This 177-nucleotide RNA was probed chemically with 2A3 and DMS.

RNA sequence: GGGAACGACUCGAGUAGAGUCGAAAACAAAACAAGCCUCUAAGAUAUCUCCUUACCGUUAUCAAUGGAGGUAAACUCGCACAUGGCGAAGGUGGGAACGAUGACGGUAAUGCCACCAAGAGGCAAAGACCUAGGUACAGUUCGCUGUACCUAGGUCAAAAGAAACAACAACAACAAC
Reactivity to 2A3 in 0.01 (KOAc 150mM, MgCl2 10mM, bicine 150mM(pH8.5), 24C), signal-to-noise 2, nucleotides 027 to 126: c040a000a060a020a020c060a120a060g020c020c010u020c000u020a070a010g000a110u070a020u010c050u050c000c030u040u080a060c010c010g000u000u000a060u140c080a190a140u130g120g010a020g000g020u010a030a010a010c020u040c000g010c000a070c020a120u200g240g000c050g050a030a030g030g040u090g010g050g010a050a040c090g000a000u060g000a000c000g000g000u000a010a010u120g020c030c000a050c000c030a010a010g030a020g000g000c000a020a000a000
Reactivity to DMS in 0.01 (KOAc 150mM, MgCl2 10mM, bicine 150mM(pH8.5), 24C), signal-to-noise 1, nucleotides 027 to 126: c030a160a000a200a080c190a050a150g000c000c000u000c010u000a210a040g000a150u010a010u010c020u000c000c030u010u030a070c000c000g000u020u000a050u010c170a050a080u010g000g010a010g030g030u010a070a140a010c010u010c030g100c020a070c030a110u000g000g000c000g000a020a090g000g030u000g010g000g010a050a020c230g000a190u000g000a000c000g000g000u000a000a080u020g000c040c040a010c080c070a170a000g010a010g010g000c000a000a040a030

Reactivities are rounded to 0.1 and cut off at 0 and 3. Values cover nucleotides 27 to 126. The reactions ran in a buffer of 150 mM KOAc, 10 mM MgCl2 and 150 mM bicine (pH 8.5), at 24 C. It was measured as part of the RMDB library OK1LIB.